[RMDB]
RNA sequence: GGGAACGACUCGAGUAGAGUCGAAAAUUGUUAUUCAGGAAGGUUGAGUAAACAGUAGAGACUAGUAGAUAUUUUGUGCAAUCUGCCAAGAUCAAAUUGAAAGGAAGACAGUAGGUGGUUUUAAACAUCCUUAAAGCAUUCCACCAGCCUCCCUUGAGUCAUUAUUAGGGUUCGCCCUAAUAAUGACAAAAGAAACAACAACAACAAC
Reactivity to 2A3 in 0.01 (KOAc 150mM, MgCl2 10mM, bicine 150mM(pH8.5), 24C), signal-to-noise 2, nucleotides 027 to 156: u030u020g010u000u020a100u070u130c050a020g000g020a030a000g050g010u040u020g050a060g080u100a040a110a040c040a040g070u140a020g040a010g030a060c020u010a030g050u020a010g050a050u050a090u050u180u110u070g080u050g030c000a040a100u030c070u080g010c030c020a060a000g030a060u060c010a000a120a040u070u100g030a090a020a000g020g000a000a030g060a030c040a050g060u120a020g000g010u030g030g000u040u090u010u180a020a050a000c020a030u070c010c040u050u080a010a140a010g040c000a070u090u020c000c030a040c000c020a010g020c000c000u000c010c010c020u010u060g020a050
Reactivity to DMS in 0.01 (KOAc 150mM, MgCl2 10mM, bicine 150mM(pH8.5), 24C), signal-to-noise 1, nucleotides 027 to 156: u010u000g000u000u000a080u010u000c040a050g020g060a100a050g010g010u000u010g020a140g000u000a120a030a140c070a050g000u010a050g010a110g030a060c040u000a050g060u000a050g040a080u010a030u010u000u020u000g030u000g000c050a070a070u020c050u040g020c030c020a050a080g000a110u000c040a000a090a230u000u000g000a090a060a190g000g030a040a050g000a090c020a070g000u010a090g010g040u000g030g030u050u000u020u000a030a060a100c040a050u000c070c030u000u000a040a060a100g080c080a130u000u010c000c010a110c000c010a070g000c020c000u000c010c010c000u000u000g010a300